The record gives the reactivity of an RNA of 177 nucleotides to DMS and 2A3. The reactions ran in a buffer of 150 mM KOAc, 10 mM MgCl2 and 150 mM bicine (pH 8.5), at 24 C. The 2A3 profile rests on 6,111 reads. As a SHAPE reagent, 2A3 marks flexible, mostly unpaired nucleotides at the ribose 2'-OH.
[RMDB]
RNA sequence: GGGAACGACUCGAGUAGAGUCGAAAAAACGAUGCCCAGCAGCCAUUCCAGUUGGGUGAUUUGUACCAUUAGGGCACUGCAUCUUACCUUACGGAACUUAAUUUUUUCUGCUAUAGUUCACAAACGACGAUUUGUAACUUUUCGAAGUUACAAAUCGAAAAGAAACAACAACAACAAC
Reactivity to DMS in 0.01 (KOAc 150mM, MgCl2 10mM, bicine 150mM(pH8.5), 24C), signal-to-noise 5, nucleotides 027 to 126: a060a030c100g010a080u000g010c030c010c010a070g020c040a080g000c200c120a120u010u000c040c030a100g010u000u000g010g000g020u000g000a060u000u000u000g020u000a100c040c040a130u000u010a090g010g010g000c220a070c080u000g000c030a050u000c020u010u000a060c030c020u000u020a080c140g030g010a050a050c120u000u010a040a020u000u000u010u010u000u000c050u010g020c090u000a090u000a050g010u000u000c050a060c130a040a050a100c180g010a200
Reactivity to 2A3 in 0.01 (KOAc 150mM, MgCl2 10mM, bicine 150mM(pH8.5), 24C), signal-to-noise 5, nucleotides 027 to 126: a000a000c070g030a040u080g040c010c010c000a010g020c000a000g050c040c030a090u100u000c010c030a050g030u020u050g030g000g000u000g040a070u000u040u080g030u030a050c030c030a050u070u200a130g040g010g010c050a010c070u030g000c000a030u000c010u020u030a030c010c010u010u040a030c040g030g000a020a020c040u080u100a120a210u120u110u070u020u040u050c040u030g020c010u050a040u060a170g050u060u080c080a050c030a160a160a020c080g120a020